The data come from the RNA Mapping Database (RMDB), library OK3TST. An RNA of 207 nucleotides, treated with 2A3 and DMS and read out base by base. 2A3 adducts were read by reverse transcription with SuperScript II with manganese. For DMS, 2,096 sequencing reads were counted. For DMS the reverse transcriptase was MarathonRT.
RNA sequence: GGGAACGACUCGAGUAGAGUCGAAAAACUAAUGUUUUGAUUACAUACGGCCCAUAUUUGGCAGCUAUCGUUGGACUUCUGCUGCUGGUCUGUCUGUUUUACUGCUGUUAUCUAAAGUUCAAGGCCUCCCAAGCGAAGAAGACCUACCGCAAGGAGCCUCAAUACUCCGAUUCGUCGGAGUAUUGAGAAAAGAAACAACAACAACAAC
Reactivity to 2A3 in 0.01 (KOAc 150mM, MgCl2 10mM, bicine 150mM(pH8.5), 24C), signal-to-noise 2, nucleotides 027 to 156: a000c030u130a160a060u090g040u040u110u030u060g070a080u150u170a030c030a080u080a050c080g040g000c020c030c010a010u040a140u100u110u100g020g040c010a010g010c030u030a000u230c170g050u050u060g020g090a040c010u040u030c000u100g000c020u010g010c040u010g000g040u010c060u080g080u000c010u010g070u010u090u080u110a030c040u040g010c000u000g050u160u010a090u160c030u060a300a000a000g000u040u060c070a070a010g040g000c000c010u050c020c020c040a060a050g000c010g030a050a000g050a030a000g000a040c000c010u020a020c000c050g030c040a000a050g020g010a010g040c000
Reactivity to DMS in 0.01 (KOAc 150mM, MgCl2 10mM, bicine 150mM(pH8.5), 24C), signal-to-noise 1, nucleotides 027 to 156: a080c050u000a090a090u010g010u000u010u010u000g020a180u000u000a100c050a170u000a080c130g060g000c020c000c010a170u000a080u000u000u020g010g070c010a120g020c020u000a060u000c050g050u010u010g010g000a100c060u000u000c040u010g000c010u020g030c060u000g020g050u010c070u010g020u000c010u010g020u020u010u010u010a080c050u000g040c030u000g010u010u010a100u000c020u000a060a150a070g000u000u000c080a090a110g040g000c020c030u010c030c000c020a050a170g010c080g010a090a110g000a040a060g000a050c000c010u000a110c090c050g010c090a100a140g000g010a100g000c120